[RMDB]
RNA sequence: GGGAACGACUCGAGUAGAGUCGAAAAUGUUGCGCCCCCCACUUUGUUAACUACGCUUGGUAGUCAGGGUGUCCCCAGUGGCGGGAACAGCAGCAGCGGUCUCCUCAGGGCCAGCGGAGGGCACGGCGUGCAGCACCAAAUUCGUUUGGUGCUGCACAAAAGAAACAACAACAACAAC
Reactivity to DMS in 0.01 (KOAc 150mM, MgCl2 10mM, bicine 150mM(pH8.5), 24C), signal-to-noise 1, nucleotides 027 to 126: u020g010u000u000g000c040g010c030c010c000c030c020c020a030c030u000u000u020g010u010u000a100a020c010u000a010c010g020c290u010u020g000g020u000a020g010u000c050a090g000g000g000u000g010u000c030c000c000c080a110g020u000g010g010c270g010g010g020a060a070c070a090g000c010a070g020c050a070g010c050g000g000u010c050u010c020c070u010c110a130g040g010g000c050c020a080g030c100g000g010a090g030g000g050c080a020c090g000g020c060
Conditions: 150 mM KOAc, 10 mM MgCl2 and 150 mM bicine (pH 8.5), 24 C. This 177-nucleotide RNA was probed chemically with DMS. Values cover nucleotides 27 to 126.